Chemical mapping of a 207-nucleotide RNA with DMS and 2A3. For DMS, 4,253 sequencing reads were counted. The RNA was probed in 150 mM KOAc, 10 mM MgCl2 and 150 mM bicine (pH 8.5) at 24 C.
RNA sequence: GGGAACGACUCGAGUAGAGUCGAAAACCUAUCCAAAAUGAGAUCCCAUCUUGCUCACUGUGCUAAUUUGAGAUUCUCAUGCCUCCUACUUGGAGAGAUCUGGACUAGAAGUCAGGGCAUCUGACUCAAUACAUUCGUCAGUUCGCUGACGAAUGAAGAACCUAUUGAACUUCGGUUCAAUAGGUUCAAAAGAAACAACAACAACAAC
Reactivity to DMS in 0.01 (KOAc 150mM, MgCl2 10mM, bicine 150mM(pH8.5), 24C), signal-to-noise 2, nucleotides 027 to 156: c020c040u020a100u000c070c010a030a060a090a150u000g010a020g000a120u000c010c000c020a040u000c090u000u000g020c030u010c170a130c170u000g000u030g010c050u000a040a060u000u000u000g010a040g010a040u000u010c020u000c020a020u000g010c080c000u000c000c020u010a140c170u000u000g010g020a050g000a100g000a060u000c050u010g010g030a140c110u000a130g010a060a070g020u000c040a020g000g030g040c130a100u000c020u000g030a010c020u000c020a090a110u000a150c010a030u000u020c010g040u000c000a020g000u010u020c300g000c010u000g000a000c000g010a010a000u000g000a080a150
Reactivity to 2A3 in 0.01 (KOAc 150mM, MgCl2 10mM, bicine 150mM(pH8.5), 24C), signal-to-noise 7, nucleotides 027 to 156: c000c000u010a060u060c010c010a100a040a010a050u010g000a000g000a020u010c010c000c000a010u010c020u030u050g000c010u050c080a260c220u290g050u140g130c060u150a060a080u040u010u010g030a030g000a030u280u040c000u000c000a010u040g020c000c000u010c010c010u120a270c130u140u210g010g000a020g000a010g020a070u060c090u080g030g010a020c050u060a070g040a130a000g050u000c010a010g020g070g190c070a120u120c070u010g010a010c000u000c030a020a080u100a120c010a000u000u000c000g000u000c010a010g000u010u140c180g040c180u010g000a000c010g000a000a000u000g000a020a020